[RMDB]
Overview:
Conditions: 150 mM KOAc, 10 mM MgCl2 and 150 mM bicine (pH 8.5), 24 C. Chemical mapping of a 177-nucleotide RNA with DMS and 2A3. The DMS profile rests on 708 reads. DMS adducts were read by reverse transcription with MarathonRT. Values cover nucleotides 27 to 126.
RNA sequence: GGGAACGACUCGAGUAGAGUCGAAAAGAUAUGGAGUGAACUACAGCCUGAAUGGAGGCAACAGCUCGGAAACGAGACAUGCCUCCGCGGCUGCACUCCUAAGUCAAAACAGUACUUCGGUACUGAACGGUGUUAAUCUCUUCGGAGAUUAACACCGAAAAGAAACAACAACAACAAC
Reactivity to DMS in 0.01 (KOAc 150mM, MgCl2 10mM, bicine 150mM(pH8.5), 24C), signal-to-noise 1, nucleotides 027 to 126: g000a020u000a300u000g000g000a000g020u010g020a060a090c210u050a300c110a020g000c000c030u020g000a040a190u020g050g000a000g040g050c000a010a010c300a290g000c000u000c000g000g000a110a090a300c000g010a030g020a090c070a280u020g000c000c030u010c000c000g020c090g000g010c000u000g000c000a010c040u000c010c000u050a000a120g000u000c010a030a060a110a070c020a000g000u000a000c000u000u000c110g010g010u000a000c000u000g000a050a210
Reactivity to 2A3 in 0.01 (KOAc 150mM, MgCl2 10mM, bicine 150mM(pH8.5), 24C), signal-to-noise 1, nucleotides 027 to 126: g050a030u100a040u190g000g000a000g000u000g070a120a040c080u170a100c300a030g000c000c010u180g140a150a300u300g000g010a000g020g000c000a000a020c090a150g040c010u010c000g050g020a010a110a040c000g000a010g060a090c010a020u060g000c010c000u020c050c000g000c000g010g030c000u010g000c000a000c000u020c000c000u030a080a000g000u020c000a000a000a180a170c000a000g000u010a000c020u070u180c300g080g000u010a000c020u020g000a080a020